Source: RMDB library OK2TST, as collected in RNAgym. An RNA of 177 nucleotides, treated with 2A3 and DMS and read out base by base. DMS adducts were read by reverse transcription with MarathonRT. The reactions ran in a buffer of 150 mM KOAc, 10 mM MgCl2 and 150 mM bicine (pH 8.5), at 24 C. Reactivities are given for positions 27 through 126.
[RMDB]
RNA sequence: GGGAACGACUCGAGUAGAGUCGAAAACACAAUACUGUGCCUCAGCGUGACCAAGUGGGUGCACUUGAACGGCGGCGAUGCUGCGCUGCAUGCGUUGCUGAAGCGCAUCUGUGAGCUGCUCGUGCCCCGAAGGUUGUCCAUUCGUGGACAACCUUCGAAAAGAAACAACAACAACAAC
Reactivity to 2A3 in 0.01 (KOAc 150mM, MgCl2 10mM, bicine 150mM(pH8.5), 24C), signal-to-noise 3, nucleotides 027 to 126: c040a010c000a000a120u180a160c070u100g020u030g050c000c010u020c010a080g070c010g090u070g070a090c040c000a090a040g070u050g020g060g120u180g040c020a010c030u030u090g090a110a020c040g010g000c000g020g000c040g010a050u150g000c030u040g010c030g030c040u030g040c000a010u140g020c030g220u100u180g030c050u120g020a070a010g000c010g000c010a010u010c010u030g120u050g060a070g000c010u000g000c030u040c040g040u030g040c000c010c010
Reactivity to DMS in 0.01 (KOAc 150mM, MgCl2 10mM, bicine 150mM(pH8.5), 24C), signal-to-noise 2, nucleotides 027 to 126: c070a050c100a090a110u010a120c140u010g010u000g000c030c020u010c040a050g010c060g010u000g010a120c150c060a130a060g040u000g010g000g020u010g000c010a060c010u010u000g000a110a030c060g010g020c010g020g000c040g020a090u010g030c080u000g010c000g020c030u010g000c100a030u010g010c040g040u010u010g000c080u010g000a080a030g010c010g000c030a010u000c030u010g020u010g010a200g020c010u000g010c010u000c050g010u000g000c020c000c040